[RMDB]
RNA sequence: GGGAACGACUCGAGUAGAGUCGAAAACUAGAUGCGUUCGCGCAUCUAGAAAGGUACAAAAACAUGCAAAAAGUUCCAAAGGACAAAAGUCCAAGCAUGAAAAAACUGAGUACUUCGGUACUCAGAACAACAGCAAUAACUUCGGUUAUUGCUGUUGAAAAGAAACAACAACAACAAC
Reactivity to 2A3 in 0.01 (KOAc 150mM, MgCl2 10mM, bicine 150mM(pH8.5), 24C), signal-to-noise 2, nucleotides 027 to 126: c000u000a000g000a030u000g010c000g020u020u040c160g000c000g010c050a000u000c000u010a000g000a010a020a010g050g020u140a040c090a020a100a010a070a000c000a010u010g000c030a050a180a000a020a110g010u060u000c020c020a120a030a050g000g000a020c060a040a300a100a050g000u000c020c000a000a020g050c010a000u000g050a190a070a010a020a010a010c000u000g000a010g000u000a010c000u030u090c210g020g010u010a010c010u000c000a000g000a010a010
Reactivity to DMS in 0.01 (KOAc 150mM, MgCl2 10mM, bicine 150mM(pH8.5), 24C), signal-to-noise 2, nucleotides 027 to 126: c000u000a000g000a010u000g020c010g010u010u010c180g040c020g060c000a000u000c000u000a010g010a040a050a070g020g030u010a120c220a110a120a050a060a150c010a000u010g020c000a070a050a100a170a120g010u010u000c020c010a100a100a100g000g000a040c000a150a070a150a110g000u010c000c000a130a140g020c000a020u000g000a000a050a050a140a070a160c010u000g000a020g020u000a000c000u010u000c210g000g030u000a000c010u000c000a010g000a100a100